Structure probing data (2A3) for a 177-nucleotide construct. The RNA was probed in 150 mM KOAc, 10 mM MgCl2 and 150 mM bicine (pH 8.5) at 24 C. 2A3 adducts were read by reverse transcription with SuperScript II with manganese.
RNA sequence: GGGAACGACUCGAGUAGAGUCGAAAACAGCCAAGCUGGGUGAGGCGAUUAUCGGUCAACUGACCAUCGCACGUGCUAAGCUGACUGCCAACUACGUGCCUGCUGGCGACCGCUACUUCUACACCACGCAAGGCCCGUGCUUCGGCACGGGCCUUGCAAAAGAAACAACAACAACAAC
Reactivity to 2A3 in 0.01 (KOAc 150mM, MgCl2 10mM, bicine 150mM(pH8.5), 24C), signal-to-noise 1, nucleotides 027 to 126: c000a000g000c000c110a170a070g030c090u050g010g000g090u090g020a090g000g000c020g000a040u050u050a070u120c020g000g000u000c120a280a230c290u230g120a090c000c000a000u050c000g040c000a140c050g050u000g010c090u050a000a000g070c000u030g090a120c130u110g040c000c000a020a020c150u000a030c000g000u120g040c030c020u130g060c000u010g020g000c010g000a000c000c080g010c020u040a020c010u000u100c000u030a090c010a010c000c030a090c080